[RMDB]
RNA sequence: GGGAACGACUCGAGUAGAGUCGAAAACCGGGCCUAGGAUAGAAAGUAUCAAGGUGUAAAAAGUGUGCACAAAACACCCACCACCCCUGUGGUGGGUGGUGCAUUCGCCUAUAUUCUGCGGAAUUUCUAAAUCUAUAUAAUUCGUUAUAUAGAUUUAAAAAGAAACAACAACAACAAC
Reactivity to DMS in 0.01 (KOAc 150mM, MgCl2 10mM, bicine 150mM(pH8.5), 24C), signal-to-noise 4, nucleotides 027 to 126: c010c000g020g020g020c010c050u000a100g000g000a030u030a020g020a090a080a150g010u010a060u020c110a120a040g000g010u000g030u030a040a070a140a120a120g000u030g030u000g020c000a020c020a080a080a140a300c010a010c000c000c000a010c040c010a030c020c250c220c300u050g060u000g010g050u000g020g000g020u000g000g020u000g010c000a010u000u020c030g000c030c030u000a110u000a040u000u010c030u010g020c090g000g010a100a070u010u040u020c030
Reactivity to 2A3 in 0.01 (KOAc 150mM, MgCl2 10mM, bicine 150mM(pH8.5), 24C), signal-to-noise 4, nucleotides 027 to 126: c000c000g000g040g020c000c020u040a040g070g000a020u030a040g140a080a300a000g130u090a070u170c070a050a020g000g000u050g050u140a080a110a040a080a080g110u100g000u000g030c070a030c010a020a280a180a000c000a070c020c000c000a000c000c000a010c010c180c030c200u270g000u030g010g010u000g000g030g010u000g010g000u000g010c000a000u020u050c020g020c000c000u060a060u010a020u160u060c040u040g050c050g080g070a100a100u050u090u040c020